An RNA of 177 nucleotides, treated with DMS and 2A3 and read out base by base.

RNA sequence: GGGAACGACUCGAGUAGAGUCGAAAAUCAUCCUGAGAUCGGGGAGCCUCGACGAUCUCUUUGAUCUCCUGAAGGAGGAAGGAGCUCUCGAGCGCUCUCCCGCCCCUCGGAUGGGCCGCUUCCGGCGCAUAAACCGUAACUUCGGUUACGGUUUAUGAAAAGAAACAACAACAACAAC
Reactivity to DMS in 0.01 (KOAc 150mM, MgCl2 10mM, bicine 150mM(pH8.5), 24C), signal-to-noise 4, nucleotides 027 to 126: u000c020a030u000c000c000u020g020a010g010a150u050c030g000g000g010g010a020g000c020c010u000c000g010a020c200g000a000u000c000u000c000u000u000u000g010a130u010c000u000c000c000u010g020a120a160g020g010a030g000g000a090a020g000g010a010g010c100u000c000u000c000g000a010g020c210g020c010u000c000u010c000c010c000g010c080c120c090c020u000c030g000g000a010u000g000g000g020c040c020g000c150u000u000c050c010g000g030c050g000
Reactivity to 2A3 in 0.01 (KOAc 150mM, MgCl2 10mM, bicine 150mM(pH8.5), 24C), signal-to-noise 2, nucleotides 027 to 126: u050c000a000u010c000c040u110g010a000g000a030u060c010g000g000g000g000a000g020c000c000u000c010g020a030c140g000a000u010c010u020c010u010u040u030g090a070u020c000u050c010c020u160g230a270a130g010g000a000g010g020a010a000g010g010a010g000c010u010c000u010c020g010a010g000c120g010c000u020c020u040c010c000c000g000c000c000c000c000u000c000g000g000a000u000g010g030g000c020c000g020c020u080u030c070c040g030g010c030g000

The DMS profile rests on 5,797 reads.